[RMDB]
RNA sequence: GGGAACGACUCGAGUAGAGUCGAAAAAGGGCAGGGUGAAAUUCCCGAUCGGCGGUAAAGUCCGCGUGCCGAACGAAAAAGGUUUGGCAGGAACCGGUGAGAUUCCGGUACCGACAGUAUAGUCUGGAUGACCACUUCAGCUUCGGCUGAAGUGGAAGUCUUAUGAAUUGUUCGCAAUUCAUAAGACAAAAGAAACAACAACAACAAC
Reactivity to 2A3 in 0.01 (KOAc 150mM, MgCl2 10mM, bicine 150mM(pH8.5), 24C), signal-to-noise 2, nucleotides 027 to 156: a000g100g010g060c100a070g030g000g020u010g000a020a000a000u000u010c020c000c010g000a010u010c000g010g010c000g000g000u000a000a000a000g010u020c000c000g020c010g010u010g000c000c000g010a010a010c020g090a050a050a080a070a070g080g000u000u010u010g010g010c010a010g040g000a000a000c000c010g000g000u000g000a020g010a000u010u010c000c000g010g000u000a010c000c000g010a000c000a000g010u000a020u010a020g010u020c000u000g010g020a030u110g040a000c000c000a000c000u010u000c000a010g010c000u030u150c230g100g000c000u000g000a000a000g000u010g010g000a010a020
Reactivity to DMS in 0.01 (KOAc 150mM, MgCl2 10mM, bicine 150mM(pH8.5), 24C), signal-to-noise 2, nucleotides 027 to 156: a120g020g000g050c050a200g030g000g020u050g000a070a170a300u000u000c000c000c010g000a040u020c000g040g000c000g000g020u010a160a220a060g000u000c010c000g020c010g020u000g000c000c000g050a020a030c000g000a010a130a110a250a140g020g020u000u000u000g020g040c000a090g010g010a010a020c000c010g000g010u000g010a290g010a300u000u000c020c020g000g000u000a010c010c020g000a070c060a030g010u010a260u000a040g000u000c000u010g010g020a210u010g000a160c010c000a020c000u000u000c010a010g000c010u000u010c300g070g020c000u000g000a000a010g020u020g000g000a010a050